[RMDB]
RNA sequence: GGGAACGACUCGAGUAGAGUCGAAAAUCGCGUGUCUGCUUGAUCUGGUUGAUGGCGAUCGCGCCGAACACGAUGCCCACGAUCGAGCCGAUGCAGCAAAGCACACCGACGAGCGCCGAGAUCAGUGCGCUGCAUUUUAGUUCGCUAAAAUGCAGCGAAAAGAAACAACAACAACAAC
Reactivity to DMS in 0.01 (KOAc 150mM, MgCl2 10mM, bicine 150mM(pH8.5), 24C), signal-to-noise 3, nucleotides 027 to 126: u000c090g020c050g010u000g020u000c040u000g000c010u010u000g020a020u000c010u000g000g030u000u000g010a110u020g010g020c030g030a060u000c090g000c100g010c060c240g030a070a280c090a080c000g000a010u010g000c050c010c050a190c150g010a020u000c000g000a030g060c000c060g000a050u000g020c020a070g040c050a040a110a130g010c070a070c060a100c030c050g000a100c060g010a110g000c040g020c030c030g000a100g010a090u000c110a060g010u000g010
Reactivity to 2A3 in 0.01 (KOAc 150mM, MgCl2 10mM, bicine 150mM(pH8.5), 24C), signal-to-noise 2, nucleotides 027 to 126: u080c030g000c010g020u010g020u000c000u010g000c000u010u030g010a000u000c010u040g060g010u060u090g120a170u200g040g000c070g060a060u050c100g020c050g070c120c050g060a130a020c090a010c080g060a030u130g050c000c010c010a010c090g020a010u030c010g000a000g000c000c000g020a010u010g000c050a060g000c030a150a000a000g030c040a040c000a050c030c020g100a080c020g040a030g040c030g000c020c020g050a040g000a130u080c030a020g060u030g130
Chemical mapping of a 177-nucleotide RNA with DMS and 2A3. Values cover nucleotides 27 to 126. The reactions ran in a buffer of 150 mM KOAc, 10 mM MgCl2 and 150 mM bicine (pH 8.5), at 24 C. DMS (dimethyl sulfate) methylates the pairing face of unpaired adenines and cytosines. For 2A3 the reverse transcriptase was SuperScript II with manganese. The data come from the RNA Mapping Database (RMDB), library OK2TST.